[RMDB]
RNA sequence: GGGAACGACUCGAGUAGAGUCGAAAACGCAGAGGGUUCUGAUAACAAAGAACCUAGAUAGCCGCAUCGGUAUUAUAGGUUGUAGUCGGUGAGCCGGAAUGCCUGCAUCGUAAGCCUAUAAGUAAAUUUAAGUGUAAUCACUUCGGUGAUUACACAACCAUGUUAUUACGUUCGCGUAAUAACAUGGAAAAGAAACAACAACAACAAC
Reactivity to 2A3 in 0.01 (KOAc 150mM, MgCl2 10mM, bicine 150mM(pH8.5), 24C), signal-to-noise 5, nucleotides 027 to 156: c070g010c040a040g060a100g070g020g010u020u010c030u020g080a110u090a250a050c030a040a120a000g000a000a000c000c000u020a010g020a080u090a040g040c040c030g060c120a130u180c100g050g010u090a030u140u010a010u030a010g000g020u020u040g110u090a060g080u100c000g010g000u020g020a020g030c050c070g070g070a120a030u110g040c010c020u040g040c010a010u000c010g020u030a020a020g000c000c010u030a020u010a050a050g050u100a020a100a170u160u230u130a150a020g000u000g000u000a000a000u000c000a000c010u030u060c160g050g000u000g010a000u010u000a000c000a000c000a000a000
Reactivity to DMS in 0.01 (KOAc 150mM, MgCl2 10mM, bicine 150mM(pH8.5), 24C), signal-to-noise 2, nucleotides 027 to 156: c050g010c000a140g010a260g010g000g000u000u000c010u000g010a190u010a160a170c300a160a150a090g010a060a000c000c000u000a020g020a170u000a160g020c020c070g000c110a080u000c060g020g010u000a060u000u010a060u000a040g020g030u000u000g050u000a110g030u000c030g000g010u000g000a090g050c000c070g000g020a140a140u010g030c030c010u010g000c010a050u000c030g030u000a110a170g010c000c000u000a000u010a030a030g020u000a030a070a150u000u010u000a040a140g020u000g000u000a010a000u000c000a040c000u000u000c300g050g030u000g000a030u000u000a000c000a010c000a050a090
This 207-nucleotide RNA was probed chemically with 2A3 and DMS. Reactivities are given for positions 27 through 156. High 2A3 reactivity points to a flexible backbone, as in loops and unpaired stretches. For 2A3, 4,180 sequencing reads were counted. The reactions ran in a buffer of 150 mM KOAc, 10 mM MgCl2 and 150 mM bicine (pH 8.5), at 24 C.